An RNA of 177 nucleotides, treated with DMS and 2A3 and read out base by base.
The RNA was probed in 150 mM KOAc, 10 mM MgCl2 and 150 mM bicine (pH 8.5) at 24 C.
2A3 adducts were read by reverse transcription with SuperScript II with manganese.
[RMDB]
RNA sequence: GGGAACGACUCGAGUAGAGUCGAAAAAAGAACAGAAAAAAAAUCAGCAGAUGGAGAUUACCAUUCCCAAUGCCUGAACUUCCUCCUGCUAUUAAGAUUGCUAGAGAAUUGUGUCUUAAACAGUUCACAUAAGGACCUGAUUCGUCAGGUCCUUAUGAAAAGAAACAACAACAACAAC
Reactivity to DMS in 0.01 (KOAc 150mM, MgCl2 10mM, bicine 150mM(pH8.5), 24C), signal-to-noise 3, nucleotides 027 to 126: a080a060g020a080a080c100a180g000a070a000a010a040a090a070a050a140u000c060a040g000c060a030g000a120u000g000g000a090g010a150u000u020a050c170c070a120u000u000c030c000c020a090a070u010g020c110c030u010g000a050a070c050u010u000c000c010u000c090c010u010g000c040u000a100u000u000a080a060g000a030u000u000g030c050u000a080g000a100g000a020a030u010u010g020u000g000u000c110u000u000a040a050a040c080a020g000u000u000c030a220
Reactivity to 2A3 in 0.01 (KOAc 150mM, MgCl2 10mM, bicine 150mM(pH8.5), 24C), signal-to-noise 1, nucleotides 027 to 126: a000a000g130a100a030c130a140g260a150a090a050a000a020a020a000a020u100c020a000g010c010a010g020a080u040g010g040a100g000a060u060u150a050c040c020a040u050u000c000c020c000a050a040u060g020c030c030u060g010a030a050c010u000u030c000c000u070c000c000u020g000c000u050a070u120u030a050a030g020a110u110u150g040c020u060a020g020a020g040a220a050u080u080g060u010g000u020c010u050u060a120a070a010c030a050g000u130u070c070a010